[RMDB]
RNA sequence: GGGAACGACUCGAGUAGAGUCGAAAAAAUACGGGGCUACCCGAAGGUGGUGGCCUCCAGCGCCCAGUCUCACGACGAGCAGCUGCAGCGCCGCCUGUGGGCUGUGUCCGAAGAGCUCACCGGGGUCCUGAGCUGAUUGUUUCGACAAUCAGCUCAGAAAAGAAACAACAACAACAAC
Reactivity to 2A3 in 0.01 (KOAc 150mM, MgCl2 10mM, bicine 150mM(pH8.5), 24C), signal-to-noise 2, nucleotides 027 to 126: a000a000u170a000c040g000g000g000g000c010u050a070c040c030c030g020a110a040g190g070u170g000g000u000g060g000c000c000u000c000c000a010g000c010g000c000c000c000a010g040u030c000u040c000a090c060g100a000c010g000a020g000c020a030g000c010u030g040c000a030g000c070g070c030c060g130c000c020u010g000u040g010g010g000c000u030g020u040g050u140c050c030g060a090a030g040a010g040c010u000c030a030c000c020g020g000g010g000u030c030
Reactivity to DMS in 0.01 (KOAc 150mM, MgCl2 10mM, bicine 150mM(pH8.5), 24C), signal-to-noise 2, nucleotides 027 to 126: a100a100u040a020c280g010g000g000g040c000u000a020c040c000c020g030a150a140g010g060u040g010g010u020g010g020c010c000u000c010c000a030g000c090g000c000c000c020a230g030u020c040u040c120a170c230g010a160c030g000a110g030c030a090g030c000u000g000c080a070g000c110g000c060c060g000c010c000u000g030u000g000g000g020c040u010g000u010g000u120c090c090g030a260a120g000a090g010c000u000c000a020c070c040g020g000g040g000u010c180

The data come from the RNA Mapping Database (RMDB), library OK1LIB. Chemical mapping of a 177-nucleotide RNA with 2A3 and DMS. The DMS profile rests on 1,466 reads. DMS adducts were read by reverse transcription with MarathonRT. For 2A3 the reverse transcriptase was SuperScript II with manganese.